[RMDB]
RNA sequence: GGGAACGACUCGAGUAGAGUCGAAAAGCAUACGUUACAUAUAGUGCGUUCGUAUGCGGUAGGCAACGCACUAUAUGUAAGCCUACCACCGUACGGUGGACAUGCGAAAGCAUGUCCAUCGUACGGAGCACGUUGAACCCUUCGGGGUUCAACGUGCAAAAGAAACAACAACAACAAC
Reactivity to 2A3 in 0.01 (KOAc 150mM, MgCl2 10mM, bicine 150mM(pH8.5), 24C), signal-to-noise 1, nucleotides 027 to 126: g030c000a080u090a120c100g050u030u000a020c020a000u020a020u000a010g000u000g020c000g000u000u040c080g020u080a130u220g140c020g020g120u100a090g050g100c030a010a000c010g000c000a000c000u030a000u000a000u000g000u000a020a020g000c000c000u040a030c020c050a040c000c000g000u000a000c000g000g040u000g000g010a000c000a000u000g000c000g070a110a000a010g000c000a000u000g000u000c010c000a000u000c000g000u000a000c000g000g000a000
Background:
Chemical mapping of a 177-nucleotide RNA with 2A3. The RNA was probed in 150 mM KOAc, 10 mM MgCl2 and 150 mM bicine (pH 8.5) at 24 C. For 2A3 the reverse transcriptase was SuperScript II with manganese.